[RMDB]
RNA sequence: GGGAACGACUCGAGUAGAGUCGAAAACGAGGCGACGUAUAGGGUCUGACGCCUGCCCGGUGCCGGAAGGUCACGCGGAGGUGUUAGCGCGAGCGAAGCACCGAAGCCAAGCCCCGGUAAACGGCGGACAUACAGUUCACUUCGGUGAACUGUAUGUAAAAGAAACAACAACAACAAC
Reactivity to 2A3 in 0.01 (KOAc 150mM, MgCl2 10mM, bicine 150mM(pH8.5), 24C), signal-to-noise 1, nucleotides 027 to 126: c020g020a040g020g050c040g020a070c050g090u120a080u150a250g080g030g040u010c060u080g040a030c010g010c010c000u020g030c020c000c010g150g040u000g000c000c010g020g020a190a070g040g020u100c050a000c050g000c000g000g030a030g000g000u030g140u200u010a010g000c010g030c000g010a020g020c000g000a020a000g000c010a000c000c010g010a020a000g000c010c010a030a000g010c000c010c000c010g010g030u050a040a080a020c030g010g000c010g000g010
Reactivity to DMS in 0.01 (KOAc 150mM, MgCl2 10mM, bicine 150mM(pH8.5), 24C), signal-to-noise 2, nucleotides 027 to 126: c120g000a130g040g010c010g010a130c040g050u000a150u010a100g000g000g010u000c050u050g020a180c050g000c000c060u000g000c050c050c000g040g000u010g000c010c010g000g000a080a140g010g010u010c080a170c260g000c000g020g010a300g000g010u000g010u000u000a300g000c000g000c230g000a150g010c000g000a140a170g010c000a000c010c010g020a300a170g000c000c030a090a280g010c000c000c000c020g000g000u000a030a050a050c190g010g050c040g000g010